This 207-nucleotide RNA was probed chemically with DMS and 2A3. 2A3 adducts were read by reverse transcription with SuperScript II with manganese. Conditions: 150 mM KOAc, 10 mM MgCl2 and 150 mM bicine (pH 8.5), 24 C.

RNA sequence: GGGAACGACUCGAGUAGAGUCGAAAAAGUCCAUAUGCCCAUCUUUGCUGUUGCGGAUGGAUGUUUAUACCCGCUAUGGAUGCCUAUUACUGAAAUGUAAUAGAUGCCUAAUACUCUCUCUCAGGGAGAGAGUUUAGAUGCCUCCAAAGUGGAUGCUUCGUAUUUAAUUAUUCGUAAUUAAAUACGAAAAAGAAACAACAACAACAAC
Reactivity to DMS in 0.01 (KOAc 150mM, MgCl2 10mM, bicine 150mM(pH8.5), 24C), signal-to-noise 2, nucleotides 027 to 156: a100g030u020c010c020a070u010a110u010g010c010c030c010a200u000c100u010u000u000g020c010u010g030u010u000g030c000g030g010a080u000g020g010a070u010g010u000u000u010a100u000a060c030c030c010g020c140u000a300u000g000g010a020u000g030c030c000u010a010u010u000a020c000u000g010a130a100a130u010g020u010a020a030u000a010g000a180u000g020c050c020u000a030a050u000a060c000u000c000u000c000u000c000u010c120a300g020g040g010a000g000a020g010a000g020u000u000u000a000g010a090u010g000c040c040u000c010c010a040a160a100g050u000g020g030a020u000g010c130u000
Reactivity to 2A3 in 0.01 (KOAc 150mM, MgCl2 10mM, bicine 150mM(pH8.5), 24C), signal-to-noise 4, nucleotides 027 to 156: a010g050u030c030c010a040u080a070u210g040c000c010c000a030u030c040u100u180u170g040c070u110g050u300u300g000c010g030g000a010u010g010g000a040u040g040u020u180u020a140u060a060c000c000c010g020c010u010a040u060g000g010a010u010g000c000c010u000a000u000u000a000c010u020g140a130a080a200u170g000u000a000a000u000a010g030a030u100g050c010c000u040a060a010u140a150c000u000c000u000c000u000c010u030c130a150g080g300g000a000g000a000g000a000g000u000u000u000a000g000a000u040g010c010c000u000c010c000a050a090a030g020u030g030g060a070u080g050c010u000